Structure probing data (DMS) for a 177-nucleotide construct.

[RMDB]
RNA sequence: GGGAACGACUCGAGUAGAGUCGAAAAGCUGGUUCCGUACCGUGCCGUUGUAAUGGCUGUACUGCAGGUUAUAGUCCAGUUCGGGAUGUGCCAGCAUGGCCUUUUUAGCACUCAUGGUGAAAAGCCCACAAUUGUGCCGUUUCGACGGCACAAUUGUAAAAGAAACAACAACAACAAC
Reactivity to DMS in 0.01 (KOAc 150mM, MgCl2 10mM, bicine 150mM(pH8.5), 24C), signal-to-noise 1, nucleotides 027 to 126: g030c030u010g000g000u000u000c300c100g010u010a070c060c080g000u000g030c020c040g030u010u010g020u000a100a050u000g010g040c010u000g000u000a060c110u040g040c110a080g000g010u000u000a020u010a100g020u000c030c010a120g000u000u010c270g010g000g000a050u020g000u000g000c000c000a030g050c040a110u000g000g020c040c010u000u020u010u010u000a100g000c040a040c160u020c170a100u000g000g020u000g010a040a040a100a100g000c040c010c080

For DMS, 897 sequencing reads were counted. The RNA was probed in 150 mM KOAc, 10 mM MgCl2 and 150 mM bicine (pH 8.5) at 24 C. DMS adducts were read by reverse transcription with MarathonRT.